[RMDB]
An RNA of 177 nucleotides, treated with 2A3 and DMS and read out base by base. The RNA was probed in 150 mM KOAc, 10 mM MgCl2 and 150 mM bicine (pH 8.5) at 24 C. 2A3 adducts were read by reverse transcription with SuperScript II with manganese. It was measured as part of the RMDB libraries RFM100 and RFMREP. For DMS the reverse transcriptase was MarathonRT.
RNA sequence: GGGAACGACUCGAGUAGAGUCGAAAAGUAGUCAGUGUGUGGAGGUGGAUUAGAGCCACCUUGGUACGACAAGUAGCUUUAGCUGCUUGAACGUCACGACAGUGACGGCCCGGAGGGUGAGGCUCGCGGGAACUAUAAGUUUCGACUUAUAGUUCCCAAAAGAAACAACAACAACAAC
Reactivity to 2A3 in 0.01 (KOAc 150mM, MgCl2 10mM, bicine 150mM(pH8.5), 24C), signal-to-noise 4, nucleotides 027 to 126: g150u200a010g010u020c060a010g040u030g010u010g050u050g120g030a030g030g010u030g000g030a090u070u180a130g030a040g110c010c000a020c010c010u000u030g010g030u110a010c020g010a040c050a000a010g000u010a000g000c010u140u200u180a070g000c000u000g000c000u000u010g030a200a030c010g010u010c010a010c020g160a060c070a070g040u010g020a010c000g030g010c000c020c000g010g040a020g010g020g010u100g040a060g010g030c010u010c040g060c030
Reactivity to DMS in 0.01 (KOAc 150mM, MgCl2 10mM, bicine 150mM(pH8.5), 24C), signal-to-noise 7, nucleotides 027 to 126: g000u010a060g010u000c020a040g010u000g010u000g030u010g010g000a040g000g020u000g000g020a110u010u040a120g020a160g010c010c000a060c010c010u010u010g000g010u010a070c080g010a260c000a010a010g010u000a010g010c000u020u020u030a100g020c000u000g000c020u000u000g000a050a060c020g010u000c030a120c030g000a110c290a080g010u000g010a020c000g000g000c030c010c060g000g010a080g010g000g020u000g000a100g000g010c020u000c050g010c300